Conditions: 150 mM KOAc, 10 mM MgCl2 and 150 mM bicine (pH 8.5), 24 C. An RNA of 177 nucleotides, treated with DMS and 2A3 and read out base by base. DMS adducts were read by reverse transcription with MarathonRT. For DMS, 10,123 sequencing reads were counted. Source: RMDB library OK2TST, as collected in RNAgym.

[RMDB]
RNA sequence: GGGAACGACUCGAGUAGAGUCGAAAAGCAGAUUUUGUCGGCAGGUUAUUUUGUUAAAUGUGUGAAUUUGUGCACUACCCAAUGUGCUUAUUGGUGACGAAUUGCAAAACGACAAUGGGCUUGCGGACCUAAUUAAAUUAUUCGUAAUUUAAUUAGGAAAAGAAACAACAACAACAAC
Reactivity to DMS in 0.01 (KOAc 150mM, MgCl2 10mM, bicine 150mM(pH8.5), 24C), signal-to-noise 6, nucleotides 027 to 126: g010c030a110g010a140u000u000u010u000g010u000c010g010g030c190a070g010g020u010u000a030u000u000u000u000g010u010u000a050a100a090u010g010u000g010u010g010a060a060u010u000u000g020u000g010c010a020c030u000a130c100c010c020a040a060u000g000u000g010c100u000u000a060u000u000g010g010u010g010a040c020g010a010a020u000u000g010c030a030a050a070a140c130g000a020c010a020a020u000g010g000g010c010u000u010g020c040g000g010a140
Reactivity to 2A3 in 0.01 (KOAc 150mM, MgCl2 10mM, bicine 150mM(pH8.5), 24C), signal-to-noise 2, nucleotides 027 to 126: g000c020a020g060a180u080u110u210u280g050u050c050g080g000c040a020g090g030u060u150a120u110u180u090u070g040u040u090a110a170a190u170g020u000g020u010g150a110a150u040u080u070g090u160g050c010a010c020u060a050c000c000c000a010a060u100g040u060g050c030u070u120a060u060u080g030g010u030g020a000c030g040a020a010u030u040g000c040a000a050a040a090c030g000a000c000a000a010u040g070g010g000c000u010u060g000c050g030g000a010